[RMDB]
RNA sequence: GGGAACGACUCGAGUAGAGUCGAAAACUUCGGAUCAUUCCUGGUUGAGACAGGAGUAAUCCCAGCUGAAACAGGGUUUUCACCCUUCCUUUCUUCUGGUUUCCUUCCUCUCGCCGGAAGGUCUUCGGUAACCUUGAGUGUUCGCACUCAAGGUUACAAAAGAAACAACAACAACAAC
Reactivity to 2A3 in 0.01 (KOAc 150mM, MgCl2 10mM, bicine 150mM(pH8.5), 24C), signal-to-noise 2, nucleotides 027 to 126: c060u130u110c030g020g000a010u030c020a300u000u010c000c040u260g050g070u170u300g040a030g010a050c250a130g000g010a000g000u020a020a020u070c000c000c020a000g000c000u010g000a000a020a070c300a200g000g010g030u050u090u240u260c130a060c000c000c000u000u020c000c000u000u020u010c000u000u000c000u000g010g070u020u000u000c010c000u030u030c000c010u000c010u000c030g000c010c010g000g000a000a000g000g010u010c000u100u110c020g040